[RMDB]
RNA sequence: GGGAACGACUCGAGUAGAGUCGAAAAGAAAGGCAGCUAGUGCAGCCCACGCAGAGGCAUGCUUUUGCAUGCCCAGUCGAGCCCACGACUCAGGGCAGCUGCGGCACUGAGGGCAGCUGCCGAAAGAGACUGACUGAUAGUUCGCUAUCAGUCAGUCAAAAGAAACAACAACAACAAC
Reactivity to 2A3 in 0.01 (KOAc 150mM, MgCl2 10mM, bicine 150mM(pH8.5), 24C), signal-to-noise 2, nucleotides 027 to 126: g100a030a130a000g010g000c010a010g000c030u080a020g040u030g060c030a000g020c000c010c050a070c120g130c030a030g030a130g070g000c020a020u020g000c040u300u240u180u300g000c000a010u020g010c000c000c020a000g000u000c010g020a000g010c000c000c000a060c010g000a020c000u070c140a040g040g050g010c010a040g000c050u080g020c000g040g030c060a060c090u090g060a150g010g030g000c020a000g000c000u000g000c000c010g000a010a020a010g050a010
Reactivity to DMS in 0.01 (KOAc 150mM, MgCl2 10mM, bicine 150mM(pH8.5), 24C), signal-to-noise 2, nucleotides 027 to 126: g010a150a090a170g000g010c010a010g000c000u010a070g010u000g020c050a060g000c010c040c060a170c200g000c090a110g040a140g000g030c020a010u000g000c010u000u010u000u000g030c000a010u000g000c010c000c050a030g000u000c020g000a170g000c010c020c000a300c010g000a040c010u010c180a130g010g010g010c010a120g010c150u020g010c100g040g000c060a060c070u000g010a060g000g020g000c020a030g000c020u000g010c010c010g000a010a080a100g000a240